[RMDB]
The data come from the RNA Mapping Database (RMDB), library OK1LIB. Structure probing data (2A3) for a 177-nucleotide construct. For 2A3, 952 sequencing reads were counted. The reactions ran in a buffer of 150 mM KOAc, 10 mM MgCl2 and 150 mM bicine (pH 8.5), at 24 C.
RNA sequence: GGGAACGACUCGAGUAGAGUCGAAAAUCGUUUGCUCUUAUUCGCCCUCAAAGAAGAGCGUCCUAGAUAUUAAGACUAUAUAUAUUUGUGGGUGUAUAGUUUUGUCUGGGAGCAGACAGAGGAGACGGGAUAAUUUAUAAUUCGUUAUAAAUUAUCCAAAAGAAACAACAACAACAAC
Reactivity to 2A3 in 0.01 (KOAc 150mM, MgCl2 10mM, bicine 150mM(pH8.5), 24C), signal-to-noise 1, nucleotides 027 to 126: u100c020g010u020u000u030g000c000u000c000u060u050a070u180u100c050g030c000c000c020u030c020a170a120a040g130a030a020g040a040g020c000g000u030c000c000u020a020g020a050u030a090u160u250a140a040g000a000c000u010a000u010a000u000a010u010a160u080u160u100g170u140g060g180g020u000g010u000a010u010a010g000u020u000u080u060g020u000c010u000g020g000g020a000g000c000a010g070a090c000a000g010a000g010g130a140g000a140c090g090